[RMDB]
RNA sequence: GGGAACGACUCGAGUAGAGUCGAAAAUCUAUCGAAAAUUGCUAUUUCAGAGAUGAGGUUCGGUAGUCUAGGUUCACAAUGAACCGUAAUAUAUCUAGGAGGUGGAUAUUUCUGAAGCAAGAGCUGAUUAUUUAUUUCUUCUUCCAAUCUAUUGGUACUGGUUAAGGAAAUUCGUUUCCUUAACCAGAAAAGAAACAACAACAACAAC
Reactivity to DMS in 0.01 (KOAc 150mM, MgCl2 10mM, bicine 150mM(pH8.5), 24C), signal-to-noise 2, nucleotides 027 to 156: u010c020u020a090u000c020g010a070a030a120a090u010u010g000c040u020a140u000u000u000c050a190g020a180g000a120u000g020a100g020g040u000u010c000g030g010u000a030g020u010c070u000a100g010g050u000u010c000a080c090a130a220u010g000a010a020c010c010g020u020a020a080u000a120u000a050u000c030u000a140g030g010a060g050g020u000g000g000a060u000a030u000u010u010c040u010g000a050a090g010c050a070a120g010a140g060c020u020g000a090u020u000a120u000u000u020a080u010u000u000c020u000u000c060u000u010c010c010a030a150u010c080u000a130u000u000g010g020u000a300
Reactivity to 2A3 in 0.01 (KOAc 150mM, MgCl2 10mM, bicine 150mM(pH8.5), 24C), signal-to-noise 2, nucleotides 027 to 156: u000c000u000a050u030c020g030a050a010a040a140u100u110g010c010u050a150u060u160u060c030a120g020a010g010a080u070g030a040g050g060u050u050c000g010g020u030a020g000u000c030u030a070g010g010u020u050c020a040c050a120a230u230g000a010a000c000c000g000u000a050a000u080a020u010a020u040c020u050a080g010g080a020g000g080u020g010g000a000u000a000u040u050u080c080u060g050a060a000g000c050a050a060g020a000g100c050u040g070a040u060u120a050u140u120u020a110u060u020u030c010u080u000c010u050u030c000c010a040a100u130c070u160a180u080u070g040g000u000a050
An RNA of 207 nucleotides, treated with DMS and 2A3 and read out base by base. DMS adducts were read by reverse transcription with MarathonRT. The RNA was probed in 150 mM KOAc, 10 mM MgCl2 and 150 mM bicine (pH 8.5) at 24 C. Values cover nucleotides 27 to 156. Source: RMDB library OK3TST, as collected in RNAgym.